[RMDB]
RNA sequence: GGGAACGACUCGAGUAGAGUCGAAAAGGACAACAACAAUUCACUGCCUAUGUUCGUGCUACAGACGCUAAAGAUCAUAAAGUCGUUUGGAGCGUUGAAGGUGGUUCAACGGGUACAGCUAUUACAGUAGUACUAUGACCUUCGGGUCAUAGUACUAAAAAGAAACAACAACAACAAC
Reactivity to 2A3 in 0.01 (KOAc 150mM, MgCl2 10mM, bicine 150mM(pH8.5), 24C), signal-to-noise 3, nucleotides 027 to 126: g040g000a000c000a080a000c010a020a000c010a070a120u120u070c020a040c040u050g000c010c000u080a080u210g120u080u100c050g030u030g000c000u020a020c010a040g010a020c030g020c020u070a110a090a070g100a120u110c040a070u160a160a190a000g070u130c030g000u000u070u050g070g010a030g000c040g020u030u160g010a030a020g070g060u060g000g000u090u090c020a060a010c040g000g050g010u060a030c040a010g010c020u080a050u290u080a090c040a060g100
Reactivity to DMS in 0.01 (KOAc 150mM, MgCl2 10mM, bicine 150mM(pH8.5), 24C), signal-to-noise 4, nucleotides 027 to 126: g000g010a040c020a030a030c060a080a100c150a140a100u010u000c120a090c050u000g020c040c010u010a100u010g030u010u010c070g000u000g010c000u000a050c040a020g000a030c000g020c040u010a070a110a150g010a080u010c140a090u020a060a090a040g000u010c020g010u000u010u000g000g010a040g000c020g030u000u000g020a060a050g010g020u000g000g020u010u010c060a060a060c090g000g000g000u000a030c090a070g020c040u000a050u000u000a140c160a130g010
An RNA of 177 nucleotides, treated with 2A3 and DMS and read out base by base. Source: RMDB library OK2TRN, as collected in RNAgym. 2A3 is a SHAPE reagent: it acylates the 2'-hydroxyl of flexible nucleotides of all four kinds. For 2A3 the reverse transcriptase was SuperScript II with manganese. Reactivities are given for positions 27 through 126. Conditions: 150 mM KOAc, 10 mM MgCl2 and 150 mM bicine (pH 8.5), 24 C.